This 207-nucleotide RNA was probed chemically with 2A3. It was measured as part of the RMDB library OK3TST. For 2A3 the reverse transcriptase was SuperScript II with manganese. Reactivities are given for positions 27 through 156.

RNA sequence: GGGAACGACUCGAGUAGAGUCGAAAAAUAAGACUUAUGAAGCAUAUAGGAAUCAACUUCAGUGUUGUCGCAUGUGCAGAUAGCACUAACACACCUAAAACAGAUUGGUGGAUACCUGAAGACUAUGUUCAACUACUUUUAAGUUCUAUUAGUCACCCCGAGGGAACGAAUUCGUUCGUUCCCUCGGAAAAGAAACAACAACAACAAC
Reactivity to 2A3 in 0.01 (KOAc 150mM, MgCl2 10mM, bicine 150mM(pH8.5), 24C), signal-to-noise 1, nucleotides 027 to 156: a000u050a060a010g000a000c000u000u000a010u200g090a010a020g020c050a070u080a040u050a150g040g000a120a110u050c000a010a080c010u020u050c020a020g000u060g140u260u070g040u090c050g020c200a090u200g020u010g000c000a010g080a300u300a100g040c000a000c000u050a200a000c040a020c000a030c030c000u050a060a020a140a040c050a050g150a250u110u170g010g000u020g020g020a020u010a020c000c030u000g010a020a030g070a060c090u120a190u230g010u050u010c010a090a100c020u100a000c000u000u000u000u190a010a000g020u040u000c020u020a020u080u070a080g030u020c020a120c020c000